The record gives the reactivity of an RNA of 177 nucleotides to 2A3 and DMS.
RNA sequence: GGGAACGACUCGAGUAGAGUCGAAAAGCUCAGAUUUCAAUCCGUUGCAUAUCAGGGGUGCUAAGAUGAAUGCAAUGGCGGCUAGAGUCUACAAGCGUAUGAAAUUCUAUGUCCAUGAUGCUAGGCGGUUAUUAGACCUUUUCGAAGGUCUAAUAACAAAAGAAACAACAACAACAAC
Reactivity to 2A3 in 0.01 (KOAc 150mM, MgCl2 10mM, bicine 150mM(pH8.5), 24C), signal-to-noise 7, nucleotides 027 to 126: g020c010u020c050a080g040a220u070u140u100c060a070a070u020c020c010g030u020u020g010c030a020u090a140u140c030a030g040g030g050g020u140g080c030u070a090a060g040a140u090g030a070a010u020g000c000a000a040u030g010g020c030g000g000c010u030a020g000a020g070u020c000u030a030c040a160a060g030c030g060u080a060u180g090a080a080a050u140u040c030u040a060u110g040u010c020c020a050u080g010a010u060g040c010u010a020g050g060c040g030
Reactivity to DMS in 0.01 (KOAc 150mM, MgCl2 10mM, bicine 150mM(pH8.5), 24C), signal-to-noise 8, nucleotides 027 to 126: g010c020u000c050a110g010a120u000u000u010c050a080a140u000c010c010g020u000u000g010c010a030u010a120u000c030a070g010g010g010g020u010g010c120u000a080a090g010a090u000g010a060a040u000g010c020a030a040u000g000g010c200g010g000c050u000a050g000a080g010u000c020u000a080c130a110a110g010c080g010u000a040u010g000a060a070a080u010u000c050u000a060u000g000u000c020c050a110u000g010a060u000g000c020u000a060g000g010c050g010

Notes: The DMS profile rests on 13,907 reads. For DMS the reverse transcriptase was MarathonRT.